Chemical mapping of a 177-nucleotide RNA with DMS and 2A3. For DMS, 1,795 sequencing reads were counted. Conditions: 150 mM KOAc, 10 mM MgCl2 and 150 mM bicine (pH 8.5), 24 C. Values cover nucleotides 27 to 126. DMS adducts were read by reverse transcription with MarathonRT. Values are in units of 0.01, from 0 to 300, in steps of 10. Source: RMDB library OK1LIB, as collected in RNAgym. High DMS reactivity at an A or C suggests that its Watson-Crick edge is free.
RNA sequence: GGGAACGACUCGAGUAGAGUCGAAAAUAGACCGUGAAAUUGCCAACGAAAAUAUAUCUCGAGUUUUAUUAGAUAACAAAGGUGGUGCGACCUUGGCAGUAGAGCGUUUGGUUGCAGCAAAGACCAAGACCAUAAAUCACUUCGGUGAUUUAUGGUCAAAAGAAACAACAACAACAAC
Reactivity to DMS in 0.01 (KOAc 150mM, MgCl2 10mM, bicine 150mM(pH8.5), 24C), signal-to-noise 2, nucleotides 027 to 126: u000a170g000a170c150c050g020u000g000a170a260a030u010u000g000c010c040a010a030c190g000a070a020a060a130u040a110u030a130u010c000u000c030g040a300g030u020u000u010u020a090u070u010a040g020a140u050a040a140c020a090a030a040g000g010u000g000g030u000g020c040g000a090c020c110u000u000g000g030c000a040g000u010a070g020a300g000c030g030u010u000u000g020g000u050u000g010c090a080g030c170a030a060a050g000a000c040c050a000a210
Reactivity to 2A3 in 0.01 (KOAc 150mM, MgCl2 10mM, bicine 150mM(pH8.5), 24C), signal-to-noise 3, nucleotides 027 to 126: u120a040g060a060c040c070g000u050g010a040a060a150u100u090g010c060c050a090a010c090g070a130a000a000a000u130a030u030a080u050c030u030c020g110a110g030u110u090u050u000a130u050u070a090g120a120u110a140a040c040a080a070a000g070g020u040g000g190u100g090c060g010a030c030c030u030u030g000g000c000a020g040u160a050g030a050g040c060g010u010u020u010g050g010u010u000g000c020a030g050c070a080a050a000g020a040c040c000a030a040